[RMDB]
The record gives the reactivity of an RNA of 207 nucleotides to DMS and 2A3. The RNA was probed in 150 mM KOAc, 10 mM MgCl2 and 150 mM bicine (pH 8.5) at 24 C. Values cover nucleotides 27 to 156. For 2A3, 6,323 sequencing reads were counted. For DMS the reverse transcriptase was MarathonRT. The DMS profile rests on 6,733 reads. It was measured as part of the RMDB library M2RFPK.
RNA sequence: GGGAACGACUCGAGUAGAGUCGAAAAUUCCAUUUGAGUAUCCUGAAAACGGGCUUUUCAACAUGGAACGUACAUAUUAAAUAGUAGGAGUGCAUAGUGGCCCGUAUAGCAGGCAUUAACAUUCCUGAAAACGUGAAAAGGUUCGCCUUUUCACGAACUUGUACAUAAAGUUCGCUUUAUGUACAAGAAAAGAAACAACAACAACAAC
Reactivity to DMS in 0.01 (KOAc 150mM, MgCl2 10mM, bicine 150mM(pH8.5), 24C), signal-to-noise 3, nucleotides 027 to 156: u000u000c010c010a000u000u010u000g010a110g000u000a080u010c010c020u000g010a100a100a190a210c050g020g010g040c050u000u000u010u000c020a020a010c040a050u000g010g000a040a070c050g000u000a170c070a110u000a090u000u010a080a050a200u000a130g020u000a050g000g010a080g020u000g020c020a090u010a070g020u000g020g020c010c000c010g010u000a040u010a140g020c060a020g030g000c050a040u000u010a080a070c010a080u000u000c010c000u010g000a060a040a070a140c020g030u000g020a020a000a020a010g020g030u000u000c300g010c000c000u000u000u000u000c000a000c000g010a010a030
Reactivity to 2A3 in 0.01 (KOAc 150mM, MgCl2 10mM, bicine 150mM(pH8.5), 24C), signal-to-noise 6, nucleotides 027 to 156: u040u000c000c000a000u030u020u020g020a020g060u050a050u090c000c000u010g040a050a040a030a040c040g000g000g000c020u120u090u040u050c030a060a030c010a110u020g010g040a070a030c050g100u140a040c030a050u230a090u150u300a150a140a120u160a080g170u050a010g010g060a020g010u020g020c060a050u060a130g030u020g030g030c020c010c010g020u040a040u030a060g020c010a000g000g010c000a000u010u010a020a010c000a010u030u050c000c000u030g030a050a080a030a040c010g000u010g000a000a000a000a000g030g000u030u080c160g100c010c000u000u000u000u000c000a000c000g000a000a000